Overview
Structure probing data (DMS and 2A3) for a 207-nucleotide construct.
RNA sequence: GGGAACGACUCGAGUAGAGUCGAAAAUAGUCCAGGAUUUAUCCAUGGUAGUAAUUCGUUUAAAUUGACUACAGGUGAAAGUGGCUUGGUAGAGUAAAGAUCCAAGAACUUUAAGGCUGGAGUGUUAGAUGGUGCCUGGUGGUGAAUAUGGAAACUCGUACUCUGCCUUAUUCGUAAGGCAGAGUACAAAAGAAACAACAACAACAAC
Reactivity to DMS in 0.01 (KOAc 150mM, MgCl2 10mM, bicine 150mM(pH8.5), 24C), signal-to-noise 1, nucleotides 027 to 156: u010a060g020u020c010c010a140g000g000a120u000u010u000a070u000c010c010a120u010g040g030u000a060g000u030a040a140u000u000c040g020u000u000u000a090a040a090u000u010g010a140c000u000a050c000a050g010g000u030g030a060a060a100g010u000g010g030c020u000u000g010g020u010a130g000a220g040u010a100a070a100g010a200u010c030c040a080a120g010a080a090c010u010u010u000a070a110g010g010c020u020g000g000a040g010u000g030u000u000a140g000a070u040g000g010u000g030c020c030u000g000g020u000g000g010u000g000a030a120u000a060u010g010g000a070a120a110c040u000c040
Reactivity to 2A3 in 0.01 (KOAc 150mM, MgCl2 10mM, bicine 150mM(pH8.5), 24C), signal-to-noise 2, nucleotides 027 to 156: u070a020g040u000c020c020a020g080g030a090u060u100u120a060u040c030c030a030u110g140g000u010a040g000u040a080a130u040u100c060g060u040u020u190a120a170a110u130u100g050a020c000u020a030c030a030g040g030u060g160a030a080a000g030u060g010g060c010u000u050g000g020u100a010g000a000g120u110a150a080a000g050a010u000c000c000a020a000g000a010a020c000u010u140u060a130a030g070g000c020u010g010g050a070g010u020g040u030u020a070g010a040u030g050g000u030g030c000c000u020g010g000u040g000g000u030g010a030a030u080a080u120g000g060a090a030a030c070u070c110
The reactions ran in a buffer of 150 mM KOAc, 10 mM MgCl2 and 150 mM bicine (pH 8.5), at 24 C.